[RMDB]
RNA sequence: GGGAACGACUCGAGUAGAGUCGAAAACUCUGAAGGCAUGAUCACCCCGUCCGAUGCGGAAGUUCGUGCUUCCGUCGAACGCGAAAGUCGGACGGCGGCGAUGAGUCGCAACGCAAAGCCGCGGCAAUAAGCUCGUCGUCGUUCGCGACGACGAGAAGCAAAUGCUGUAGUUCGCUACAGCAUUUGCAAAAGAAACAACAACAACAAC
Reactivity to 2A3 in 0.01 (KOAc 150mM, MgCl2 10mM, bicine 150mM(pH8.5), 24C), signal-to-noise 2, nucleotides 027 to 156: c050u070c070u050g110a170a070g080g000c110a140u120g040a020u150c000a070c000c000c000c000g000u000c000c000g000a010u020g010c000g010g020a000a010g030u160u300c180g160u300g070c000u000u000c000c000g000u000c020g080a140a050c050g020c070g130a110a070a040g000u000c000g000g000a000c000g000g010c020g000g000c020g000a000u020g030a000g010u010c010g000c040a130a060c090g030c060a200a110a030g000c020c020g000c020g000g000c030a020a140u080a140a050g110c010u000c010g000u000c000g000u000c030g000u010u070c210g010c020g040a000c010g000a020c000g000a000g000a000a000
Chemical mapping of a 207-nucleotide RNA with 2A3. The 2A3 profile rests on 1,031 reads. 2A3 adducts were read by reverse transcription with SuperScript II with manganese. The data come from the RNA Mapping Database (RMDB), library M2RFPK. The RNA was probed in 150 mM KOAc, 10 mM MgCl2 and 150 mM bicine (pH 8.5) at 24 C.